[RMDB]
Structure probing data (DMS and 2A3) for a 177-nucleotide construct.
The reactions ran in a buffer of 150 mM KOAc, 10 mM MgCl2 and 150 mM bicine (pH 8.5), at 24 C.
RNA sequence: GGGAACGACUCGAGUAGAGUCGAAAAGAUAUGGACCGAGGCUAGCUAUCACAUCGGAAACGAUGUACGUGAUAGCUUGGACCCUUCGUCCUAAGUCAAAACGGGAGCGCGUUCGCGCGCUCCCGAAGAUCAAUACCAACUUCGGUUGGUAUUGAUCAAAAGAAACAACAACAACAAC
Reactivity to DMS in 0.01 (KOAc 150mM, MgCl2 10mM, bicine 150mM(pH8.5), 24C), signal-to-noise 3, nucleotides 027 to 126: g010a050u000a300u000g010g000a000c000c080g000a000g000g010c010u000a020g020c000u010a000u000c000a010c000a040u000c000g030g010a100a070a260c010g020a010u000g000u000a040c300g020u000g010a020u000a010g010c010u000u000g010g000a070c300c010c010u000u000c300g000u000c000c000u000a050a120g000u000c040a080a050a100a120c030g030g000g020a030g010c000g020c040g050u000u010c200g010c020g050c000g010c010u000c000c000c010g010a000a040
Reactivity to 2A3 in 0.01 (KOAc 150mM, MgCl2 10mM, bicine 150mM(pH8.5), 24C), signal-to-noise 1, nucleotides 027 to 126: g020a020u100a050u120g010g000a000c070c080g020a030g000g050c000u010a000g040c010u000a010u030c000a000c000a020u030c000g070g000a090a050a040c030g020a050u080g120u290a090c210g070u020g000a000u000a000g000c030u000u010g010g050a040c030c010c060u080u060c030g020u030c000c000u000a100a020g050u060c050a020a010a100a160c030g000g000g020a000g010c020g000c000g030u140u220c290g010c000g000c000g040c140u000c000c000c000g000a010a000